[RMDB]
RNA sequence: GGGAACGACUCGAGUAGAGUCGAAAAUGGCUCUUGAGGAGCUACCGGACGCCCUUCAGACAAUAGUUUUGAUUGCACUAUUGAGUGUGAUGUCCUUAGGUGUGUUUUUUCUACUCAUGCAAAGGAAGCACUUCAACGAAUUCGUUCGUUGAAGUGCAAAAGAAACAACAACAACAAC
Reactivity to 2A3 in 0.01 (KOAc 150mM, MgCl2 10mM, bicine 150mM(pH8.5), 24C), signal-to-noise 1, nucleotides 027 to 126: u060g000g000c000u010c000u000u140g110a100g090g080a080g000c000u000a020c030c020g060g050a040c050g000c000c000c000u000u050c070a100g000a110c030a020a120u100a110g010u000u000u000u170g110a100u040u190g000c000a000c000u020a090u110u160g020a060g000u040g050u010g020a040u010g030u060c000c000u010u140a080g000g000u020g020u000g000u000u010u000u000u000u010c070u010a110c050u040c070a180u150g050c060a140a120a010g000g000a000a030
This 177-nucleotide RNA was probed chemically with 2A3. The RNA was probed in 150 mM KOAc, 10 mM MgCl2 and 150 mM bicine (pH 8.5) at 24 C. 2A3 is a SHAPE reagent: it acylates the 2'-hydroxyl of flexible nucleotides of all four kinds. The 2A3 profile rests on 488 reads. It was measured as part of the RMDB library OK1LIB.